Conditions: 150 mM KOAc, 10 mM MgCl2 and 150 mM bicine (pH 8.5), 24 C. Structure probing data (2A3 and DMS) for a 207-nucleotide construct. For 2A3, 4,143 sequencing reads were counted. The data come from the RNA Mapping Database (RMDB), library RNAMAK. 2A3 adducts were read by reverse transcription with SuperScript II with manganese.
RNA sequence: GGGAACGACUCGAGUAGAGUCGAAAAGCGUACUACUCUAGCGUGUGAUUAAUAAUCAGAACUACUAUUCCCAAAUAGGAAUAGCUGAUUAAAGCUUAUACACGCACAGAGUAUCGCAAAAGGUUACAGGGUUAAGUUCGCUUAACCCUGUAACCAACAUUGAUAAGGUGUUCGCACCUUAUCAAUGAAAAGAAACAACAACAACAAC
Reactivity to 2A3 in 0.01 (KOAc 150mM, MgCl2 10mM, bicine 150mM(pH8.5), 24C), signal-to-noise 5, nucleotides 027 to 156: g020c000g020u070a090c080u000a000c000u010c000u020a000g000c010g000u020g010u040g100a100u050u190a080a130u020a030a000u020c010a000g020a090a040c070u200a030c010u020a300u030u040c050c020c060a200a220a210u260a080g000g000a000a010u000a010g000c000u010g000a000u000u020a100a070a030g000c000u050u050a040u030a150c010a010c010g000c070a060c010a010g000a000g000u000a010u160c010g000c000a070a100a040a030g000g000u000u000a000c010a010g020g000g040u020u030a000a010g020u040u120c210g030c100u000u010a000a000c000c000c000u010g000u000a000a000c000c000a000a000
Reactivity to DMS in 0.01 (KOAc 150mM, MgCl2 10mM, bicine 150mM(pH8.5), 24C), signal-to-noise 3, nucleotides 027 to 156: g010c010g030u010a100c090u000a010c020u000c000u000a120g020c010g020u000g000u000g010a180u010u010a090a300u000a010a040u010c020a180g000a130a220c090u000a260c010u000a030u000u000c010c000c010a050a200a210u020a040g000g020a030a020u000a000g010c000u000g010a050u010u000a010a070a230g030c240u010u000a080u000a060c000a020c000g000c010a080c090a010g030a050g020u000a010u000c020g030c010a050a060a110a110g010g020u000u000a000c010a010g010g000g000u000u000a000a010g020u000u000c300g010c020u010u010a010a000c000c010c000u000g010u000a000a000c000c000a030a020